[RMDB]
Source: RMDB library TTRDEL, as collected in RNAgym. An RNA of 177 nucleotides, treated with 2A3 and read out base by base. For 2A3, 3,566 sequencing reads were counted.

RNA sequence: GGGAACGACUCGAGUAGAGUCGAAAAGAUAUGGAGGUGUAGCGAGGUUAGCCACUCUCGGAAACGAGGAGCUAACUACCCACCGCUACGACCUCCUAAGUCAAACAUUAGGCUUCGGCCUAAUGAACUGAGUAAGAGGGUUCGCCCUCUUACUCAGAAAAGAAACAACAACAACAAC
Reactivity to 2A3 in 0.01 (KOAc 150mM, MgCl2 10mM, bicine 150mM(pH8.5), 24C), signal-to-noise 2, nucleotides 027 to 126: g000a020u060a060u100g000g010a020g000g020u000g000u010a010g000c020g040a080g100g020u010u030a000g000c040c020a300c060u220c000u000c030g020g020a050a090a050c000g010a000g040g040a010g010c000u040a030a000c010u040a030c020c020c010a050c030c010g000c000u000a010c000g210a130c000c000u010c010c000u010a030a010g040u030c050a050a090a120c020a040u020u000a000g000g000c010u050u050c300g220g030c000c000u010a000a000u010g000a040a030